RNA sequence: GGGAACGACUCGAGUAGAGUCGAAAACGAUACUGUCCAUGGACCGCUGAUCCUCGUCACCAACGAACUGUUCGACGCGAUCCCUUUCCGGCAAUUCGUCAAGGCCGAUGGCCGCUUUGUCGAGCGAGAUUUACCUGGGUUUCGACCCAGGUAAAUCAAAAGAAACAACAACAACAAC
Reactivity to DMS in 0.01 (KOAc 150mM, MgCl2 10mM, bicine 150mM(pH8.5), 24C), signal-to-noise 4, nucleotides 027 to 126: c090g000a110u000a080c110u000g010u010c030c040a040u000g020g010a080c050c080g020c050u010g010a100u010c020c020u000c030g020u000c040a120c070c070a080a120c080g010a050a050c080u010g000u010u000c030g010a070c140g030c080g000a110u010c030c000c040u000u020u000c060c050g010g030c050a060a120u010u000c050g010u000c080a080a080g000g000c030c030g000a130u010g030g020c080c060g010c040u000u010u010g000u010c000g010a050g020c150g020a130
Reactivity to 2A3 in 0.01 (KOAc 150mM, MgCl2 10mM, bicine 150mM(pH8.5), 24C), signal-to-noise 3, nucleotides 027 to 126: c030g020a020u100a140c050u110g030u040c030c020a070u060g080g020a060c020c030g030c060u030g030a070u060c010c000u000c030g030u040c040a040c070c030a050a040c020g020a050a040c050u070g030u070u050c050g030a030c050g000c020g060a100u060c000c000c000u030u070u000c010c010g010g000c030a010a090u090u080c020g070u050c080a060a060g040g010c020c000g110a070u110g060g010c050c020g010c000u060u090u040g030u010c030g010a030g010c050g040a110